[RMDB]
Conditions: 150 mM KOAc, 10 mM MgCl2 and 150 mM bicine (pH 8.5), 24 C.
An RNA of 207 nucleotides, treated with 2A3 and read out base by base.
The 2A3 profile rests on 534 reads.
It was measured as part of the RMDB library OK3TST.
For 2A3 the reverse transcriptase was SuperScript II with manganese.

RNA sequence: GGGAACGACUCGAGUAGAGUCGAAAACUUCGACUGGUACAUGUGCGGAAACGUUUCUGAGUAUCGCUUCCGUGAUACGUUUAACAACAGCUACCUACUGGUGAACGGCACCUACGUCCCUGAGAACAGGAUACUCUCACUAGGCGGGGUAUUCACCCCGCGGAGACCCUUUCGAGGGUCUCCGCGGAAAAGAAACAACAACAACAAC
Reactivity to 2A3 in 0.01 (KOAc 150mM, MgCl2 10mM, bicine 150mM(pH8.5), 24C), signal-to-noise 1, nucleotides 027 to 156: c040u140u110c020g060a010c020u010g040g010u080a000c030a140u140g030u090g030c000g010g020a010a010a010c000g030u040u040u040c090u220g120a070g100u150a050u010c000g010c010u110u000c000c040g030u020g000a010u060a100c070g020u000u040u110a140a050c100a020a060c010a010g010c000u060a020c010c000u010a060c090u040g020g020u020g020a000a000c000g130g010c040a040c050c010u020a100c010g020u050c000c010c000u020g040a040g040a070a010c010a050g010g010a040u090a100c030u020c000u000c040a040c090u000a060g120g000c070g010g030g000g000u000a010u050u030c000a070c000c000